[RMDB]
RNA sequence: GGGAACGACUCGAGUAGAGUCGAAAAAGUGAAUAAAUUACUCUCGUUCAUGUAUUCAUAUCGAAACUAUGUAUCCUUUAAAACCAUGUAUUCUUUAGUCAUCUAGAUACUUAGAGUAUGAAAAAAGGCCUAAAUAUUACUUCGGUAAUAUUUAGGCAAAAGAAACAACAACAACAAC
Reactivity to 2A3 in 0.01 (KOAc 150mM, MgCl2 10mM, bicine 150mM(pH8.5), 24C), signal-to-noise 2, nucleotides 027 to 126: a010g050u040g030a020a060u100a120a080a080u160u060a030c020u000c020u050c080g040u040u030c030a000u070g080u120a080u020u080c010a000u050a020u110c080g110a030a030a060c020u040a060u080g020u030a100u060c010c000u060u210u180a100a190a030a080c040c020a030u090g000u030a110u100u050c040u060u100u030a010g030u010c000a060u000c060u090a040g030a130u050a070c020u010u030a030g010a000g010u040a040u050g100a080a060a040a070a000a050g170
Reactivity to DMS in 0.01 (KOAc 150mM, MgCl2 10mM, bicine 150mM(pH8.5), 24C), signal-to-noise 3, nucleotides 027 to 126: a110g030u010g000a030a040u010a090a080a100u000u000a040c090u000c030u000c160g010u000u010c030a040u000g020u000a070u000u000c030a010u010a040u010c050g010a120a100a110c260u000a020u000g000u000a070u010c030c050u000u000u010a030a100a120a160c150c090a050u010g010u000a030u000u010c060u010u010u010a070g010u000c100a060u020c100u010a060g020a070u000a020c030u000u000a030g010a070g020u000a010u000g010a000a040a030a080a080a120g010